[RMDB]
RNA sequence: GGGAACGACUCGAGUAGAGUCGAAAAAGAAAUCAAGAAUGAAGCAAGACAUUGAUUGAUAUGGUUGUUUUCGGUGCAUGUUUGAUUACUAAAAGUUGGGGCAUUCGAUGGUUUACAGAAGUCAUAAUGGUUCUCUAAGGUUCGCCUUAGAGAACCAAAAAGAAACAACAACAACAAC
Reactivity to DMS in 0.01 (KOAc 150mM, MgCl2 10mM, bicine 150mM(pH8.5), 24C), signal-to-noise 1, nucleotides 027 to 126: a030g020a090a130a030u000c000a050a030g010a090a050u010g000a140a130g050c110a060a070g030a100c020a070u020u000g000a060u020u050g000a050u060a000u060g010g000u070u000g030u030u000u000u000c000g010g000u010g000c030a070u000g000u000u000u010g080a100u010u000a100c060u040a080a010a080a050g030u000u000g000g000g050g000c090a040u000u000c010g010a010u010g010g010u000u000u000a070c150a010g020a070a050g000u000c060a020u040a050a150